[RMDB]
RNA sequence: GGGAACGACUCGAGUAGAGUCGAAAAGAUAUGGACGGGAGCAACAGCCUCACAUCGGAAACGAUGUAAGAGGACAUGCUCAGUCCUAAGUCAAAGCUUAUAUGGCCGUUCGCGGCCAUAUAAGCAACCUAAAUCGUUCGUUCGCGAACGAUUUAGGAAAAGAAACAACAACAACAAC
Reactivity to 2A3 in 0.01 (KOAc 150mM, MgCl2 10mM, bicine 150mM(pH8.5), 24C), signal-to-noise 1, nucleotides 027 to 126: g020a030u060a020u140g000g000a020c050g300g170g000a000g000c020a030a110c050a200g090c010c000u000c000a020c010a010u000c010g050g010a040a050a040c010g010a000u000g000u040a080a040g000a010g000g040a060c030a110u060g020c000u000c000a000g010u000c000c000u010a130a010g050u010c090a130a090a040g010c000u000u000a010u000a000u030g000g000c000c040g020u030u090c300g000c020g250g000c000c010a000u010a000u030a000a000g000c000a000a000
Reactivity to DMS in 0.01 (KOAc 150mM, MgCl2 10mM, bicine 150mM(pH8.5), 24C), signal-to-noise 2, nucleotides 027 to 126: g000a020u010a210u010g020g000a000c020g000g030g010a010g000c000a020a090c280a210g000c000c000u000c010a150c000a000u000c000g000g000a130a040a080c010g020a010u000g000u000a110a130g000a010g000g000a070c060a140u000g000c000u010c030a260g000u000c000c010u000a000a060g000u000c000a090a130a110g000c000u000u000a000u000a000u000g000g010c000c000g000u000u000c240g060c010g000g010c010c000a000u010a000u000a000a000g010c000a060a010